[RMDB]
An RNA of 177 nucleotides, treated with 2A3 and DMS and read out base by base. Reactivities are given for positions 27 through 126.
RNA sequence: GGGAACGACUCGAGUAGAGUCGAAAAUAGUAUUCUCGCCCGCUAACCACACGGCAGAGAUGUUGAGCUAAACGCCCCUCCUCCUCAGGAACACUUCUUCCGCGAACAUUGCCAGCCGUUGAGUCAACCACGGUACUCGAUUCGUCGAGUACCGUGGAAAAGAAACAACAACAACAAC
Reactivity to 2A3 in 0.01 (KOAc 150mM, MgCl2 10mM, bicine 150mM(pH8.5), 24C), signal-to-noise 2, nucleotides 027 to 126: u110a000g230u080a090u110u020c040u010c040g040c010c010c000g000c020u090a040a000c090c010a020c000a020c110g020g000c050a030g010a000g010a150u080g110u030u130g040a020g000c030u070a090a060a000c050g030c000c010c000c000u030c000c000u040c000c000u040c080a060g000g050a020a060c020a020c050u060u050c000u080u010c090c000g110c020g050a050a000c030a070u020u120g010c000c000a050g050c000c040g030u040u040g000a020g070u160c050a050a080
Reactivity to DMS in 0.01 (KOAc 150mM, MgCl2 10mM, bicine 150mM(pH8.5), 24C), signal-to-noise 1, nucleotides 027 to 126: u040a130g100u020a260u040u000c000u000c060g010c050c150c050g000c000u020a070a080c070c070a110c080a110c100g000g000c000a160g040a140g000a070u000g000u040u000g050a060g000c030u000a070a050a160c060g000c020c000c000c080u040c110c010u000c000c000u020c000a080g030g020a000a030c250a150c030u000u000c020u000u000c020c000g050c010g000a000a110c130a160u000u000g030c000c130a110g000c080c000g000u030u000g000a020g000u000c110a040a030
Record summary
For 2A3 the reverse transcriptase was SuperScript II with manganese. The 2A3 profile rests on 816 reads.